RNA sequence: GGGAACGACUCGAGUAGAGUCGAAAAGACCUUCCCCGAUAGAGACGGUACCGUUCAUCGGUCAAGGGUAUACGGUAGCUGCGCUCCCCUGCUAGAACCUCCAAACAAGCUCAAGGUCCAUUUGUAGUUAACCUGUAGGCUUCGGCCUACAGGUUAAAAAAGAAACAACAACAACAAC
Reactivity to DMS in 0.01 (KOAc 150mM, MgCl2 10mM, bicine 150mM(pH8.5), 24C), signal-to-noise 2, nucleotides 027 to 126: g010a090c060c030u000u020c040c020c010c010g010a150u020a080g010a090g010a080c020g000g010u000a040c040c060g020u030u000c100a070u010c020g040g000u000c130a090a140g000g000g010u010a060u000a080c040g000g020u010a040g010c040u000g000c050g020c020u000c020c020c000c040u000g000c030u000a070g010a060a060c070c020u010c040c060a040a100a150c170a090a120g020c000u000c030a070a100g000g010u000c010c010a090u000u000u060g000u020a080g000
Reactivity to 2A3 in 0.01 (KOAc 150mM, MgCl2 10mM, bicine 150mM(pH8.5), 24C), signal-to-noise 2, nucleotides 027 to 126: g020a000c000c020u050u020c000c000c000c000g040a090u080a150g130a020g030a000c020g010g130u020a150c090c000g000u060u110c060a070u090c040g080g030u030c050a060a020g160g000g000u170a020u000a080c020g040g000u020a000g080c000u100g010c000g000c060u000c070c050c000c000u020g010c000u000a030g030a090a050c000c030u000c000c020a000a100a140c010a010a010g040c010u010c040a000a000g030g020u000c020c000a020u080u140u120g280u020a150g070